An RNA of 177 nucleotides, treated with 2A3 and DMS and read out base by base. It was measured as part of the RMDB library TTRDES. The 2A3 profile rests on 4,101 reads. Reactivities are given for positions 27 through 126.
RNA sequence: GGGAACGACUCGAGUAGAGUCGAAAAGAUAUGGAUCUUUGUAGGGAGAUACGGAUCGGAAACGAUCCGAAUAUCUUUGAUCUACUGAGAUCCUAAGUCAAAAGUGGUCAAGUUCGCUUGACCACAACUCAGCUGUAUACUUCGGUAUACAGCUGAGAAAAGAAACAACAACAACAAC
Reactivity to 2A3 in 0.01 (KOAc 150mM, MgCl2 10mM, bicine 150mM(pH8.5), 24C), signal-to-noise 2, nucleotides 027 to 126: g000a000u020a020u040g000g000a000u010c020u000u040u050g010u010a020g000g050g090a110g000a010u020a000c000g010g000a010u000c010g000g040a030a000a000c000g010a000u000c040c010g000a010a020u010a000u020c000u300u220u220g080a060u050c000u020a000c020u010g000a000g000a020u000c000c000u010a030a000g020u030c020a020a000a010a300g000u010g000g000u020c000a000a010g000u070u160c300g040c160u000u000g000a010c000c000a000c010a000a000
Reactivity to DMS in 0.01 (KOAc 150mM, MgCl2 10mM, bicine 150mM(pH8.5), 24C), signal-to-noise 1, nucleotides 027 to 126: g030a010u000a060u020g000g000a020u000c000u000u010u000g030u000a000g000g010g010a040g010a040u000a150c020g000g000a010u010c000g020g000a020a020a080c000g010a020u000c000c000g020a060a090u000a020u000c000u000u010u010g000a040u010c000u000a000c000u020g010a020g010a030u000c010c000u000a020a050g020u000c000a090a110a120a170g010u000g010g020u000c020a010a000g000u000u030c300g000c000u000u000g000a000c000c000a000c010a050a080
For 2A3 the reverse transcriptase was SuperScript II with manganese.